[RMDB]
Source: RMDB library RNAMAK, as collected in RNAgym. An RNA of 207 nucleotides, treated with 2A3 and DMS and read out base by base. The DMS profile rests on 1,727 reads. The 2A3 profile rests on 3,156 reads. The RNA was probed in 150 mM KOAc, 10 mM MgCl2 and 150 mM bicine (pH 8.5) at 24 C.
RNA sequence: GGGAACGACUCGAGUAGAGUCGAAAAUACCACUUCGGUGGUAAAUUGGAUAUGGAAUGGUAGCUUCCCACAGGCGAAGAACAGCGUUCGGAAACGAACGCUGGGAGCCUGUGAGCGAAGCAAACAUUCCUAAGUCGUCUGUCCGCUUCGGCGGAAAGAUAUUACUGCGAUUCGUCGCAGUAAUAUCAAAAGAAACAACAACAACAAC
Reactivity to 2A3 in 0.01 (KOAc 150mM, MgCl2 10mM, bicine 150mM(pH8.5), 24C), signal-to-noise 2, nucleotides 027 to 156: u030a000c000c010a010c010u070u080c260g130g000u010g000g000u040a030a040a060u150u170g080g010a040u040a070u120g010g000a000a000u010g000g020u110a010g000c000u000u000c000c020c000a000c010a000g020g000c030g100a260a020g010a130a000c000a020g020c000g010u000u020c010g020g050a070a060a060c000g000a010a000c020g020c000u090g000g000g010a020g000c000c010u000g000u000g000a000g010c160g010a000a000g000c000a010a000a000c000a000u000u000c000c000u000a040a000g060u000c010g010u010c070u080g100u000c010c000g000c020u050u070c200g130g000c000g010g000a020a030a050
Reactivity to DMS in 0.01 (KOAc 150mM, MgCl2 10mM, bicine 150mM(pH8.5), 24C), signal-to-noise 1, nucleotides 027 to 156: u010a050c000c000a000c000u000u010c300g020g000u000g000g000u000a010a030a040u010u000g030g050a150u000a140u020g030g020a020a030u000g020g030u010a300g010c000u010u010c000c000c000a010c040a000g040g000c010g000a100a200g000a150a240c010a010g000c010g100u000u030c000g000g010a220a100a300c030g010a030a010c010g040c000u000g000g000g000a300g030c000c020u000g020u000g000a100g010c170g030a000a010g010c000a020a050a090c010a020u000u000c000c050u020a030a080g010u000c030g030u000c020u000g010u000c010c010g010c020u020u010c300g070g000c010g010g000a010a060a080